Structure probing data (2A3 and DMS) for a 207-nucleotide construct. The DMS profile rests on 3,493 reads. The 2A3 profile rests on 1,310 reads. 2A3 adducts were read by reverse transcription with SuperScript II with manganese. Source: RMDB library OK3TST, as collected in RNAgym. The reactions ran in a buffer of 150 mM KOAc, 10 mM MgCl2 and 150 mM bicine (pH 8.5), at 24 C.
RNA sequence: GGGAACGACUCGAGUAGAGUCGAAAAAGGUGCAUAACGAGGUUCGGCACGACUUGCUGGCAUCCGAUGCCCGCCAGUUGGCGGCAACGUUGUCCCGCGAUCUGCUCUGGCCGCUCCUGGUGCUGAACCGCCCUGGUAGUCCCGACGUGCGCCGGGAAUUACGUGGACUAUUCGUAGUCCACGUAAUAAAAGAAACAACAACAACAAC
Reactivity to 2A3 in 0.01 (KOAc 150mM, MgCl2 10mM, bicine 150mM(pH8.5), 24C), signal-to-noise 2, nucleotides 027 to 156: a010g100g000u080g040c030a040u110a220a200c120g060a130g010g000u030u030c000g000g000c010a010c010g010a010c010u020u060g010c020u010g010g000c000a060u070c170c170g040a040u050g020c070c080c010g000c010c010a090g060u160u130g100g010c020g000g000c010a070a000c050g050u040u060g030u070c030c010c000g040c010g020a110u040c080u190g010c060u060c060u170g070g010c030c010g000c010u040c020c010u090g010g000u000g000c010u000g010a000a000c010c000g000c020c000c000u020g060g010u130a100g060u030c000c000c000g020a060c040g040u110g000c070g030c030c000g000g000g000a020
Reactivity to DMS in 0.01 (KOAc 150mM, MgCl2 10mM, bicine 150mM(pH8.5), 24C), signal-to-noise 1, nucleotides 027 to 156: a130g040g000u000g030c030a100u000a070a150c060g000a110g000g020u010u000c010g020g050c020a050c020g020a080c060u000u000g050c020u000g020g000c000a040u010c140c040g000a130u000g000c060c000c080g000c030c020a130g000u000u010g010g010c040g030g000c000a030a030c060g010u000u000g010u000c020c000c010g040c050g000a100u000c040u000g020c020u000c040u000g040g020c020c030g000c030u000c080c000u000g010g030u020g000c000u000g010a060a060c020c020g000c000c020c050u000g020g000u000a130g020u000c010c020c000g000a110c040g000u010g000c040g070c040c010g010g030g050a120